[RMDB]
An RNA of 207 nucleotides, treated with DMS and 2A3 and read out base by base. For 2A3 the reverse transcriptase was SuperScript II with manganese. The 2A3 profile rests on 929 reads. The reactions ran in a buffer of 150 mM KOAc, 10 mM MgCl2 and 150 mM bicine (pH 8.5), at 24 C. Source: RMDB library M2RFPK, as collected in RNAgym.
RNA sequence: GGGAACGACUCGAGUAGAGUCGAAAACCAUGAGACCGUAACUUUCGUAGUCAUUGAUAAAGGGGCAGGUCUCGCUCUUUUGUCAUUGCCGUUGCCUAGAGGCAUGGUCGUUUACCGCGACUUUCCAAUACGAAGAGGGCCUUCGGGCCCUCUUCAACUAGGUCAUAAUCUUCGGAUUAUGACCUAGAAAAGAAACAACAACAACAAC
Reactivity to DMS in 0.01 (KOAc 150mM, MgCl2 10mM, bicine 150mM(pH8.5), 24C), signal-to-noise 2, nucleotides 027 to 156: c020c010a130u010g010a080g010a050c010c010g030u010a080a140c100u010u000u000c120g030u000a150g020u000c120a140u010u000g020a030u000a020a040a020g020g010g000g000c040a140g020g010u000c040u000c060g020c030u000c000u000u000u010u040g010u000c000a080u000u000g010c030c030g000u000u000g000c040c040u000a020g000a170g040g020c090a090u000g040g020u000c050g020u000u000u010a130c160c240g000c010g010a070c070u060u010u010c040c010a070a220u000a150c090g020a020a020g000a040g010g060g020c000c000u010u000c250g080g010g000c000c010c010u000c010u000u000c000a010a090
Reactivity to 2A3 in 0.01 (KOAc 150mM, MgCl2 10mM, bicine 150mM(pH8.5), 24C), signal-to-noise 2, nucleotides 027 to 156: c020c000a090u110g000a000g040a000c040c040g080u130a100a100c080u120u250u110c100g000u050a090g130u130c090a220u040u080g010a030u030a040a010a000g040g000g000g000c030a050g080g020u010c040u020c000g010c010u000c000u010u030u020u010g000u000c020a050u000u130g050c010c000g080u090u070g020c000c000u070a050g020a060g090g000c000a020u050g010g000u000c010g020u050u090u170a110c060c010g010c010g040a010c000u000u060u020c040c020a100a040u040a070c070g000a000a000g000a000g000g000g010c000c000u000u020c100g000g010g000c000c010c010u000c000u000u000c000a000a000